[RMDB]
RNA sequence: GGGAACGACUCGAGUAGAGUCGAAAAGAUAUGGAUCGACAUAGAGCGACGAAGUGGGUCGGAAACGACCCACAGAGCUCAUGUUCGAUCCUAAGUCAAAACCCCGCAUACUUCGGUAUGCGGGGAACACAUCUCCUUUCUUCGGAAAGGAGAUGUGAAAAGAAACAACAACAACAAC
Reactivity to 2A3 in 0.01 (KOAc 150mM, MgCl2 10mM, bicine 150mM(pH8.5), 24C), signal-to-noise 2, nucleotides 027 to 126: g040a010u060a020u170g000g030a000u010c000g000a000c020a020u220a280g010a000g010c040g300a300c070g020a220a010g030u040g000g020g020u020c010g000g000a090a080a030c040g000a000c000c030c020a000c000a000g000a000g000c010u000c000a000u020g000u130u070c010g010a000u010c000c000u010a020a020g010u000c030a020a040a150a300c020c000c010c000g000c000a020u010a000c000u030u100c280g130g000u000a000u010g000c000g000g010g000g000a010a000
Reactivity to DMS in 0.01 (KOAc 150mM, MgCl2 10mM, bicine 150mM(pH8.5), 24C), signal-to-noise 2, nucleotides 027 to 126: g000a050u000a300u000g030g000a000u010c000g040a020c000a010u000a180g040a010g020c000g000a220c300g000a080a110g020u010g000g000g020u000c000g020g000a080a130a300c000g020a000c000c000c000a000c000a000g000a130g020c000u000c000a020u000g020u000u020c010g020a000u000c000c000u000a000a090g000u000c020a130a100a140a150c000c000c000c000g010c000a000u000a010c000u000u050c260g010g050u000a000u000g000c000g000g030g000g010a000a010
The record gives the reactivity of an RNA of 177 nucleotides to 2A3 and DMS.
For 2A3, 2,805 sequencing reads were counted.
Reactivities are given for positions 27 through 126.
It was measured as part of the RMDB library TTRDES.
The RNA was probed in 150 mM KOAc, 10 mM MgCl2 and 150 mM bicine (pH 8.5) at 24 C.
For 2A3 the reverse transcriptase was SuperScript II with manganese.